[RMDB]
Structure probing data (DMS and 2A3) for a 207-nucleotide construct. Values cover nucleotides 27 to 156. The data come from the RNA Mapping Database (RMDB), library OK3TST. Conditions: 150 mM KOAc, 10 mM MgCl2 and 150 mM bicine (pH 8.5), 24 C. The 2A3 profile rests on 1,807 reads.

RNA sequence: GGGAACGACUCGAGUAGAGUCGAAAAUGAUUUUUUAUGAUUUUGUGCAACAGCAAUACAUUUUUCUAUGUUACUUUUAGUUCGUAUCAGAUUAUAUUCUAGAGCUUCCUGACUACUAACGAAAUUAAUAUGAUUUGGCCAAAUGUAUCCAUCAUAACAAAUCCUCGUUAUUCGUAACGAGGAUUUGAAAAGAAACAACAACAACAAC
Reactivity to DMS in 0.01 (KOAc 150mM, MgCl2 10mM, bicine 150mM(pH8.5), 24C), signal-to-noise 2, nucleotides 027 to 156: u000g000a030u000u010u000u000u010u020a120u020g010a100u000u000u000u030g040u010g010c050a110a170c130a240g020c010a090a070u000a050c010a050u000u010u000u000u020c040u000a070u000g010u000u000a020c040u000u000u000u000a070g040u000u000c020g050u000a070u020c010a100g000a070u000u000a060u000a100u000u000c090u000a170g000a100g020c010u000u010c190c060u000g000a110c080u000a070c030u000a050a120c040g000a070a040a180u000u000a060a010u010a090u000g000a090u000u000u010g030g020c000c040a030a010a050u020g000u000a070u000c010c070a080u010c010a080u000a060a190
Reactivity to 2A3 in 0.01 (KOAc 150mM, MgCl2 10mM, bicine 150mM(pH8.5), 24C), signal-to-noise 3, nucleotides 027 to 156: u060g020a050u070u030u000u050u070u050a070u080g040a060u050u100u210u120g030u050g010c070a140a100c020a200g060c020a020a050u030a020c010a050u060u080u040u050u040c080u130a040u060g010u000u050a050c020u060u060u020u060a090g000u010u020c020g010u010a010u040c010a020g020a040u110u080a080u180a070u260u100c120u150a130g010a030g200c070u080u000c050c000u010g010a030c100u040a000c010u010a040a000c000g020a020a020a030u080u030a030a020u040a040u080g050a080u060u020u170g050g000c020c030a010a070a060u010g010u000a020u010c060c010a020u020c010a010u020a070a030
Overview
For DMS, 2,740 sequencing reads were counted.